This 177-nucleotide RNA was probed chemically with 2A3.
Source: RMDB library OK1LIB, as collected in RNAgym.
2A3 adducts were read by reverse transcription with SuperScript II with manganese.

RNA sequence: GGGAACGACUCGAGUAGAGUCGAAAAUCACAAAGCGGAUUUAGCUCGGUUGGGAGAGGUCCAGACCGAAGAUCUGGUUGUCCUGUGGGCGAUCCACAGAAUUCGCACCAUAAACAACGGGAGAUUCGCGGAUUAGCAGGUUCGCCUGCUAAUCCGCAAAAGAAACAACAACAACAAC
Reactivity to 2A3 in 0.01 (KOAc 150mM, MgCl2 10mM, bicine 150mM(pH8.5), 24C), signal-to-noise 1, nucleotides 027 to 126: u090c000a010c090a150a260a000g040c090g010g010a010u150u000u190a000g000c000u000c020g120g000u000u060g040g010g010a180g000a000g100g190u190c000c040a030g040a000c000c030g000a050a000g000a150u000c000u000g180g000u000u040g140u120c000c000u000g000u010g020g020g000c220g000a000u200c060c000a060c000a000g290a070a000u230u030c000g060c130a300c000c000a000u050a000a090a000c000a000a000c000g000g160g000a000g000a000u000u020c070